[RMDB]
The record gives the reactivity of an RNA of 177 nucleotides to DMS and 2A3.

RNA sequence: GGGAACGACUCGAGUAGAGUCGAAAAUCGGCAUCCUCGCGCUCGAUCAGGUGAUAGGAGGUGUAGGGCAUCGCCGGAUAGAGGUAGGCGCCGUCCUUGCGCUUGCCCUCGGUAAGAGCGGCGAAGAGUAUUUAUAGGUCUUCGGACCUAUAAAUACAAAAGAAACAACAACAACAAC
Reactivity to DMS in 0.01 (KOAc 150mM, MgCl2 10mM, bicine 150mM(pH8.5), 24C), signal-to-noise 9, nucleotides 027 to 126: u010c070g020g010c070a130u010c020c010u000c040g020c060g000c020u000c030g000a060u010c060a140g010g020u010g020a070u000a070g010g010a050g010g020u000g010u010a050g010g010g000c110a100u000c030g010c000c010g010g000a110u000a090g000a070g010g010u000a040g000g000c040g010c010c140g010u000c050c040u010u000g000c010g000c020u000u000g000c050c020c020u000c020g010g020u010a080a140g010a090g000c020g020g010c020g020a040a090g010a160
Reactivity to 2A3 in 0.01 (KOAc 150mM, MgCl2 10mM, bicine 150mM(pH8.5), 24C), signal-to-noise 5, nucleotides 027 to 126: u090c010g050g020c020a070u040c000c000u020c020g020c000g030c020u040c030g080a110u050c030a070g170g020u120g090a080u090a090g050g060a050g010g050u080g040u110a060g010g010g000c020a040u040c010g000c000c010g010g010a050u100a050g060a030g010g040u050a010g000g010c010g000c010c010g060u070c020c000u030u070g020c020g000c010u000u040g010c010c020c000u010c020g000g030u130a130a040g020a020g090c040g040g000c010g030a030a010g050a010
Values are in units of 0.01, from 0 to 300, in steps of 10. 2A3 adducts were read by reverse transcription with SuperScript II with manganese. Conditions: 150 mM KOAc, 10 mM MgCl2 and 150 mM bicine (pH 8.5), 24 C. For DMS the reverse transcriptase was MarathonRT.